[RMDB]
RNA sequence: GGGAACGACUCGAGUAGAGUCGAAAAAAUGCCGCCUCAGUUCCAAGCUCUUUCGUGGCACUGUAAACAGUCCUAUUGAGUUAGGGGCAGUCAACCACGUUGCGAAGCUAAAUUAUCUGGACGAGAGUUACGAUUCCCUACUUCGGUAGGGAAUCAAGAUUUUAUCAAGCUUCGGCUUGAUAAAAUCAAAAGAAACAACAACAACAAC
Reactivity to DMS in 0.01 (KOAc 150mM, MgCl2 10mM, bicine 150mM(pH8.5), 24C), signal-to-noise 2, nucleotides 027 to 156: a020a070u000g020c000c020g040c030c000u030c040a190g010u000u000c020c010a110a300g000c000u000c030u000u000u000c030g050u010g010g010c040a050c010u000g000u000a040a100a100c020a240g000u000c010c010u000a030u000u040g020a250g010u020u000a000g000g000g000g020c000a040g020u000c040a090a020c010c000a020c020g000u000u000g050c130g020a070a090g020c030u000a060a070a060u000u010a120u000c080u000g020g020a070c000g000a080g000a140g010u000u010a130c060g010a050u000u000c000c000c010u000a020c000u000u020c260g040g010u000a000g020g010g010a030a000u000c000a040a140
Reactivity to 2A3 in 0.01 (KOAc 150mM, MgCl2 10mM, bicine 150mM(pH8.5), 24C), signal-to-noise 3, nucleotides 027 to 156: a000a030u080g060c010c010g030c030c000u030c040a090g010u140u000c010c010a020a030g000c010u000c000u010u020u060c010g010u000g000g020c070a010c030u010g040u070a030a150a110c050a100g130u040c010c000u000a000u020u100g190a200g300u030u010a040g000g000g040g000c000a000g020u020c030a000a050c000c000a010c000g000u000u020g080c150g120a100a040g000c020u030a030a150a130u280u220a120u070c090u080g010g000a000c000g020a020g000a010g080u050u100a030c070g000a000u000u010c000c000c000u000a020c000u010u060c100g050g000u000a000g000g000g000a000a000u000c000a000a010